[RMDB]
Structure probing data (DMS) for a 177-nucleotide construct. The DMS profile rests on 774 reads.
RNA sequence: GGGAACGACUCGAGUAGAGUCGAAAAUUGUAGGCGCCGCCCUAUACCUUGUCUGCCUCCCCGCGGUGCAUGGAGCCGGGCCACCUCGACCUGAAUGGAAGCCGGCGGCACCUCGCUAACGGCCAAGCGUAUUGCAACGCUUCGGCGUUGCAAUACGAAAAGAAACAACAACAACAAC
Reactivity to DMS in 0.01 (KOAc 150mM, MgCl2 10mM, bicine 150mM(pH8.5), 24C), signal-to-noise 1, nucleotides 027 to 126: u000u000g000u000a040g000g050c030g020c050c070g000c060c020c020u010a100u000a130c070c010u020u000g010u000c020u000g000c060c030u000c080c070c070c050g020c120g030g030u000g000c020a040u020g010g010a200g010c030c040g010g010g000c030c040a010c070c020u010c050g010a060c140c100u000g020a090a050u010g020g010a200a100g000c000c080g010g000c070g010g020c050a020c030c050u000c030g010c070u010a040a260c050g000g010c040c070a050a080g000
Description:
For DMS the reverse transcriptase was MarathonRT.